[RMDB]
RNA sequence: GGGAACGACUCGAGUAGAGUCGAAAACGGACGGGAUUUUAGCCAGGUUGCACGUUUACCCAUUUCGUGUUGGGUCCUGGACCCAUUUAAGAUAAUAGAAAUAUUAUCGAUUUCUUUACCGUCCGGAGCACCUACUAGUGUUCGCACUAGUAGGUGCAAAAGAAACAACAACAACAAC
Reactivity to DMS in 0.01 (KOAc 150mM, MgCl2 10mM, bicine 150mM(pH8.5), 24C), signal-to-noise 1, nucleotides 027 to 126: c000g010g000a010c000g000g000g010a090u000u010u010u010a110g030c040c040a040g000g000u000u000g000c020a000c000g000u000u000u000a190c070c050c090a130u020u010u000c030g040u000g020u000u000g030g000g000u010c010c060u010g000g000a240c040c020c040a060u020u010u000a130a220g000a010u000a000a020u000a010g000a150a100a180u000a000u000u000a000u000c000g000a100u000u000u000c060u010u000u000a110c010c010g000u000c000c000g000g000a110

This 177-nucleotide RNA was probed chemically with DMS.
Values cover nucleotides 27 to 126.
It was measured as part of the RMDB library OK2TRN.
The reactions ran in a buffer of 150 mM KOAc, 10 mM MgCl2 and 150 mM bicine (pH 8.5), at 24 C.
DMS adducts were read by reverse transcription with MarathonRT.